Conditions: 150 mM KOAc, 10 mM MgCl2 and 150 mM bicine (pH 8.5), 24 C. Structure probing data (2A3) for a 207-nucleotide construct.
[RMDB]
RNA sequence: GGGAACGACUCGAGUAGAGUCGAAAAAAGGAAUGGACAGAAAACUAUCUAAGUAACGGUGGACAUCUAGUAUUCAAAAUCACAUGCUCUUUCAAACAAUUCAAACAGCUAGAUGAACUAGCCGCCCACUUCUCCAUCGUUGAUAUCAUAAAACUAAUCUUCUCAAAGCUUUCGAGCUUUGAGAAGAAAAAGAAACAACAACAACAAC
Reactivity to 2A3 in 0.01 (KOAc 150mM, MgCl2 10mM, bicine 150mM(pH8.5), 24C), signal-to-noise 1, nucleotides 027 to 156: a000a020g030g010a060a010u070g000g060a000c030a010g130a070a080a020a000c170u180a100u160c090u160a020a210g030u130a040a020c000g090g020u030g010g020a010c000a000u000c000u000a000g010u060a130u090u170c090a110a120a040a110u170c020a120c010a150u140g070c030u020c020u050u300u170c120a090a220a150c010a080a170u050u210c080a120a050a090c010a030g050c000u000a000g050a030u000g000a010a010c040u080a060g000c000c000g080c000c030c000a000c020u080u070c070u000c040c000a020u030c000g030u000u000g060a030u050a000u110c090a040u130a100a000a100a000c070u110a030a200
The 2A3 profile rests on 482 reads. Source: RMDB library OK3TST, as collected in RNAgym.